[RMDB]
RNA sequence: GGGAACGACUCGAGUAGAGUCGAAAAGUGGUGCGCGGAGAGGGUAACCACCGGCGCGCGUCACUGAUAUAUCCACCGGGGGUUAAGGGGAGAAAAGGAUACAGCGCGACGAAGUUAGCACGCUGCCGAAAUGUACCCACAUUCGUGUGGGUACAAAUACAUCAUGUCCAUUCGUGGACAUGAUGUAAAAAGAAACAACAACAACAAC
Reactivity to DMS in 0.01 (KOAc 150mM, MgCl2 10mM, bicine 150mM(pH8.5), 24C), signal-to-noise 1, nucleotides 027 to 156: g000u010g000g010u000g030c040g060c030g000g010a110g000a110g000g000g000u000a070a040c080c040a090c040c010g000g000c020g040c020g010c010g010u000c030a080c000u000g010a080u020a150u010a080u000c040c050a140c050c030g010g010g020g010g020u000u010a080a080g010g010g000g000a110g000a030a030a080a130g010g000a300u010a050c000a050g040c010g010c030g000a110c030g000a130a150g010u010u000a060g000c050a010c040g000c000u000g010c000c040g010a070a100a100u000g000u000a030c000c000c000a010c010a080u000u010c230g070u030g000u000g010g000g000u010a000c020a010a080a110
Reactivity to 2A3 in 0.01 (KOAc 150mM, MgCl2 10mM, bicine 150mM(pH8.5), 24C), signal-to-noise 2, nucleotides 027 to 156: g000u000g000g000u010g020c010g000c060g100g070a120g010a060g180g030g030u080a060a050c030c010a030c020c010g060g010c000g000c000g000c010g000u010c000a000c000u010g010a010u040a010u010a040u140c020c020a040c020c050g000g030g000g000g030u000u050a050a010g000g040g000g020a040g030a000a130a010a020g020g000a050u110a160c020a020g040c030g010c050g080a100c030g030a150a020g060u040u100a000g010c020a020c050g020c010u020g060c020c010g040a030a040a080u090g000u010a000c000c040c000a000c000a000u010u120c240g070u010g000u000g030g010g000u000a000c000a000a000a000